[RMDB]
RNA sequence: GGGAACGACUCGAGUAGAGUCGAAAAGGUGAAUUUAUUGGUAGCAUCGACACAUUAAGAGAGUCAAUAGUUAGAGGAAUCAAGAAUACAUAUGAUUUUACUGAUGCACGUGAAUUCUUGCAUGAGAGUAGCGGUAAUUAUUCGUAAUUACCGCUACAAAAGAAACAACAACAACAAC
Reactivity to 2A3 in 0.01 (KOAc 150mM, MgCl2 10mM, bicine 150mM(pH8.5), 24C), signal-to-noise 5, nucleotides 027 to 126: g070g040u080g040a030a050u060u070u090a090u100u150g130g020u090a060g000c000a020u020c020g040a010c020a000c010a100u120u170a120a030g080a010g020a020g100u040c010a030a070u060a090g050u060u040a020g020a010g090g100a030a030u040c010a040a060g060a100a040u110a100c040a030u160a070u100g040a050u020u030u040u070a040c050u060g020a030u010g000c010a000c010g000u030g030a030a020u060u020c030u040u130g110c060a070u110g060a040g000a020
Reactivity to DMS in 0.01 (KOAc 150mM, MgCl2 10mM, bicine 150mM(pH8.5), 24C), signal-to-noise 6, nucleotides 027 to 126: g010g010u010g000a060a040u000u010u000a050u000u010g030g030u000a090g010c030a020u000c030g000a080c150a090c110a110u000u010a090a110g010a140g000a070g000u010c050a050a070u000a080g010u000u010a070g010a110g010g010a070a080u000c030a080a060g010a090a060u010a060c070a080u000a070u000g000a060u010u000u000u010a110c090u000g000a030u000g010c010a050c030g000u000g000a050a040u010u000c000u000u000g020c140a090u000g010a100g010a170